[RMDB]
RNA sequence: GGGAACGACUCGAGUAGAGUCGAAAAGUCCAGGCUGGUCUCCAACUACUGAGCUCAAGCAGUCUGCCCACCUUGUCCUCCCAAAGUGCUAGGAUUACGGGCUUGAGCCACUGCACCUGGUCCGGUCUACGUCCUACGGUUUCGACCGUAGGACGUAAAAAGAAACAACAACAACAAC
Reactivity to DMS in 0.01 (KOAc 150mM, MgCl2 10mM, bicine 150mM(pH8.5), 24C), signal-to-noise 1, nucleotides 027 to 126: g000u000c030c040a060g000g000c010u020g020g000u000c040u000c040c040a060a090c120u000a110c060u000g020a220g010c020u000c050a020a090g010c030a080g010u000c090u000g030c030c120c020a170c060c040u020u000g020u000c030c000u020c060c040c030a080a050a050g000u000g000c050u000a060g010g010a090u000u000a080c090g020g010g020c050u000u010g000a070g010c010c020a050c080u000g000c120a090c070c030u000g020g000u000c040c030g020g000u000c120